[RMDB]
RNA sequence: GGGAACGACUCGAGUAGAGUCGAAAAGCGGUGAUGAGAACUGAUGACACUCCAGGGCUACCAGGAACGGUGUGUGUGCCUCUGGGCAGGGCCACUUCCUAGAACCAUGGGGCUGCUCUGUGAAGAGCACCCCAACUUGGUUCGCCAAGUUGGGGUGAAAAGAAACAACAACAACAAC
Reactivity to 2A3 in 0.01 (KOAc 150mM, MgCl2 10mM, bicine 150mM(pH8.5), 24C), signal-to-noise 7, nucleotides 027 to 126: g060c040g010g020u060g030a120u090g040a050g030a140a040c040u060g030a090u090g030a070c010a010c060u020c010c020a020g000g010g000c030u060a080c030c020a020g020g060a090a050c110g050g000u040g010u030g000u010g060u120g070c000c010u040c040u100g020g060g000c020a020g000g040g000c000c010a020c000u080u040c010c010u030a070g040a100a040c030c010a090u090g010g000g050g000c080u030g010c000u000c010u010g060u020g050a070a040g030a020g020
Reactivity to DMS in 0.01 (KOAc 150mM, MgCl2 10mM, bicine 150mM(pH8.5), 24C), signal-to-noise 9, nucleotides 027 to 126: g010c060g000g010u000g010a100u010g000a100g010a090a080c070u000g010a090u010g010a140c110a090c040u000c030c030a050g000g010g010c030u000a080c050c030a060g010g010a060a110c190g000g020u000g010u010g020u000g010u000g010c020c010u000c120u000g010g000g010c070a090g000g000g010c030c030a040c080u000u000c010c010u000a070g000a070a100c050c030a080u000g000g000g000g010c150u000g010c010u000c010u000g000u000g000a140a040g000a040g010

The record gives the reactivity of an RNA of 177 nucleotides to 2A3 and DMS.
Values cover nucleotides 27 to 126.
The data come from the RNA Mapping Database (RMDB), library OK2TRN.
The RNA was probed in 150 mM KOAc, 10 mM MgCl2 and 150 mM bicine (pH 8.5) at 24 C.
2A3 adducts were read by reverse transcription with SuperScript II with manganese.